[RMDB]
Chemical mapping of a 207-nucleotide RNA with 2A3 and DMS. The reactions ran in a buffer of 150 mM KOAc, 10 mM MgCl2 and 150 mM bicine (pH 8.5), at 24 C. Values cover nucleotides 27 to 156. For 2A3 the reverse transcriptase was SuperScript II with manganese. For DMS, 5,731 sequencing reads were counted. High 2A3 reactivity points to a flexible backbone, as in loops and unpaired stretches. Values are in units of 0.01, from 0 to 300, in steps of 10.

RNA sequence: GGGAACGACUCGAGUAGAGUCGAAAAGCUGCACUGGCCCCACGAGGGCGAGGUCGAUACGAUCGCCGGCUUGUCCUGGUCGACGGACGCGAACGUCCAUAUACAGCUGGUCGAGAAGCUCGCUGUGAUCUACGGCGACCCGGUCUCGAUCGCGCUGCUAGUACCUGUGUUUCGACACAGGUACUAGAAAAGAAACAACAACAACAAC
Reactivity to 2A3 in 0.01 (KOAc 150mM, MgCl2 10mM, bicine 150mM(pH8.5), 24C), signal-to-noise 4, nucleotides 027 to 156: g010c020u080g010c050a050c140u140g060g030c020c000c030c010a140c200g040a300g020g000g000c020g040a080g040g000u120c050g050a140u060a260c100g030a070u050c030g060c070c010g020g000c000u040u040g040u030c000c010u040g060g030u100c040g020a060c040g010g000a020c010g040c060g070a120a080c040g010u000c000c000a060u090a020u020a180c000a000g010c000u050g020g010u000c010g000a000g010a020a010g010c020u010c000g000c000u010g030u050g090a290u060c120u280a020c010g000g010c000g020a030c030c100c040g120g020u000c000u000c020g000a010u000c010g000c060g000c010u020g020
Reactivity to DMS in 0.01 (KOAc 150mM, MgCl2 10mM, bicine 150mM(pH8.5), 24C), signal-to-noise 3, nucleotides 027 to 156: g000c010u010g040c030a150c060u020g020g020c010c000c000c010a150c150g000a300g010g010g000c000g000a030g010g000u000c020g000a200u000a050c090g000a060u000c000g010c050c020g000g020c000u000u030g020u000c080c080u010g020g030u010c020g050a040c040g010g010a060c000g010c040g030a080a130c030g040u000c010c000a160u010a150u010a100c010a060g010c000u000g010g040u000c020g010a080g030a080a150g030c100u000c020g000c010u010g020u030g000a170u000c120u000a130c020g020g010c010g000a040c080c000c040g000g010u000c010u000c000g010a020u000c010g030c030g040c010u000g000